[RMDB]
RNA sequence: GGGAACGACUCGAGUAGAGUCGAAAAAACACUGUGUAGGAUAGGUGGGAGGCUUUGAAGUGUGGACCCCAGUCUGCAUGGAGCCGACCUUGAAAUACCACCCUUUAAUGAAGAAAAACAAAGCCAAUCUUAACUAGUUCUUCGGAACUAGUUAAGAAAAAGAAACAACAACAACAAC
Reactivity to 2A3 in 0.01 (KOAc 150mM, MgCl2 10mM, bicine 150mM(pH8.5), 24C), signal-to-noise 2, nucleotides 027 to 126: a000a000c150a030c020u140g020u010g030u080a020g050g050a080u010a040g030g000u040g010g120g000a130g000g000c000u300u210u010g030a010a020g010u020g030u000g030g010a000c020c040c000c000a020g020u010c000u000g000c000a000u020g000g030a010g000c020c010g010a040c000c000u020u050g010a050a040a010u050a010c000c010a020c000c010c020u060u170u130a220a120u230g090a110a180g100a120a100a000a010a010c060a050a070a020g090c050c020a010a080
Reactivity to DMS in 0.01 (KOAc 150mM, MgCl2 10mM, bicine 150mM(pH8.5), 24C), signal-to-noise 3, nucleotides 027 to 126: a080a050c100a090c070u000g030u010g020u000a020g000g010a090u000a030g000g000u000g000g000g020a200g010g010c000u000u000u000g000a100a090g010u010g020u000g010g010a030c020c040c020c090a180g010u000c010u000g000c010a020u010g000g000a020g010c020c010g010a090c240c030u000u000g000a060a080a050u000a070c010c010a030c000c010c020u010u000u000a060a070u000g000a070a140g000a040a060a050a060a060c120a070a080a120g020c080c080a090a150
This 177-nucleotide RNA was probed chemically with 2A3 and DMS. DMS adducts were read by reverse transcription with MarathonRT. Reactivities are given for positions 27 through 126. The data come from the RNA Mapping Database (RMDB), library M2PK90. The DMS profile rests on 2,992 reads. The RNA was probed in 150 mM KOAc, 10 mM MgCl2 and 150 mM bicine (pH 8.5) at 24 C.